[RMDB]
RNA sequence: GGGAACGACUCGAGUAGAGUCGAAAAGAUGCAUGCCGAGAGCGCAUUUUCUCUCGUAAAUAAAAUUUGCAUUUUAAUAGUCGCAAACGACGAAACUUACGCUCUAGCUGCCUAAGGGCAGUUUGUCCGCUUCCUAGAAUACUUGUGGUUUAGGAACGUAAGGGAGUCUCUUCGGAGACUCCCUUACAAAAGAAACAACAACAACAAC
Reactivity to 2A3 in 0.01 (KOAc 150mM, MgCl2 10mM, bicine 150mM(pH8.5), 24C), signal-to-noise 1, nucleotides 027 to 156: g100a010u090g020c050a000u040g140c070c030g000a000g010a000g000c050g000c030a040u000u010u120u090c010u010c010u010c030g060u050a030a070a050u120a060a080a100a030u010u060u000g000c000a010u000u000u140u080a210a130u130a030g110u040c020g000c200a040a030a220c150g060a010c000g040a090a000a000c030u030u090a050c040g040c020u000c000u010a030g000c000u000g000c020c020u050a120a040g050g000g000c000a000g010u030u030u140g000u040c000c000g050c170u050u020c010c000u000a040g160a260a120u150a150c030u040u110g030u070g080g010u000u030u070a040g000g040a030a020c030